[RMDB]
RNA sequence: GGGAACGACUCGAGUAGAGUCGAAAAAAAUUACAUCCAUCGUAUCGGUAGAAGUGGUCGAUUUGGUAGAAAGGGUGUGGCUAUAAACUUCAUUACCAAAGCUGAUUUAGCAAAACUUAGAGAAAUAGUUUUAGUACUAGUUCGCUAGUACUAAAACAAAAGAAACAACAACAACAAC
Reactivity to DMS in 0.01 (KOAc 150mM, MgCl2 10mM, bicine 150mM(pH8.5), 24C), signal-to-noise 5, nucleotides 027 to 126: a030a030a040u000u010a080c100a080u010c020c020a080u010c080g000u010a040u000c040g010g010u000a060g010a060a100g010u000g010g010u010c040g010a080u000u000u010g020g020u000a060g010a090a080a100g010g000g020u000g010u000g020g010c050u000a070u000a030a040a040c050u000u000c080a080u000u000a050c050c030a070a040a080g020c020u010g000a090u000u000u000a060g020c030a090a040a090a070c130u000u020a090g000a110g010a060a070a080u010a090
Reactivity to 2A3 in 0.01 (KOAc 150mM, MgCl2 10mM, bicine 150mM(pH8.5), 24C), signal-to-noise 4, nucleotides 027 to 126: a030a000a000u140u060a020c010a020u000c010c020a020u050c020g020u080a030u050c030g020g040u030a040g020a210a040g110u070g090g040u030c020g000a030u050u010u110g060g000u020a050g070a110a100a060g040g040g000u030g030u020g050g010c030u060a020u090a210a090a050c000u060u040c050a070u050u140a060c010c050a040a040a010g020c030u030g050a160u060u060u250a010g000c000a000a000a090a110c040u150u150a060g020a010g070a190a100a130u150a060
Record summary:
Conditions: 150 mM KOAc, 10 mM MgCl2 and 150 mM bicine (pH 8.5), 24 C. Chemical mapping of a 177-nucleotide RNA with DMS and 2A3. For 2A3, 4,437 sequencing reads were counted. For 2A3 the reverse transcriptase was SuperScript II with manganese. It was measured as part of the RMDB library OK2TRN.